[RMDB]
RNA sequence: GGGAACGACUCGAGUAGAGUCGAAAAGUUCCCCAACCAGGGAUUGUCCUCCUCGAGUUUCUUGAUGGUUCUCUUGGCCUUCCGGAGCCUUCUCUCGAGAUCGUCCGCAUCCUUUCUUGCCUGCACCCUAUCGGUCCGUUCGCGGACCGAAAAAGAAACAACAACAACAAC
Reactivity to DMS in 0.01 (KOAc 150mM, MgCl2 10mM, bicine 150mM(pH8.5), 24C), signal-to-noise 2, nucleotides 027 to 129: g070u030u000c000c000c010c140a000a000c000c000a110g070g040g020a070u020u020g040u030c090c030u020c040c000u010c070g050a120g040u050u010u030c000u010u000g010a060u010g010g020u000u000c030u030c060u000u050g000g000c100c040u030u020c000c000g050g010a120g000c080c020u040u020c060u000c010u010c030g030a060g000a060u020c050g020u020c030c030g020c060a100u010c040c040u000u000u000c030u000u050g010c020c020u020g040c130a060c000c040c050u030a090
Reactivity to 2A3 in 0.01 (KOAc 150mM, MgCl2 10mM, bicine 150mM(pH8.5), 24C), signal-to-noise 3, nucleotides 027 to 129: g000u030u040c000c000c000c000a000a030c010c050a040g000g030g050a050u050u080g060u060c000c010u030c000c040u030c000g040a090g020u030u080u030c060u040u060g020a110u160g030g030u080u000c020u000c000u030u110g040g010c020c000u130u000c000c020g000g010a020g000c000c000u010u020c010u010c000u000c010g040a050g010a150u060c030g020u000c000c010g030c030a070u020c010c000u000u020u050c000u000u000g050c000c020u040g000c010a060c010c000c020u000a070
Source: RMDB library 15KLIB, as collected in RNAgym. An RNA of 170 nucleotides, treated with DMS and 2A3 and read out base by base. For 2A3 the reverse transcriptase was SuperScript II with manganese. The RNA was probed in 150 mM KOAc, 10 mM MgCl2 and 150 mM bicine (pH 8.5) at 24 C. DMS adducts were read by reverse transcription with MarathonRT.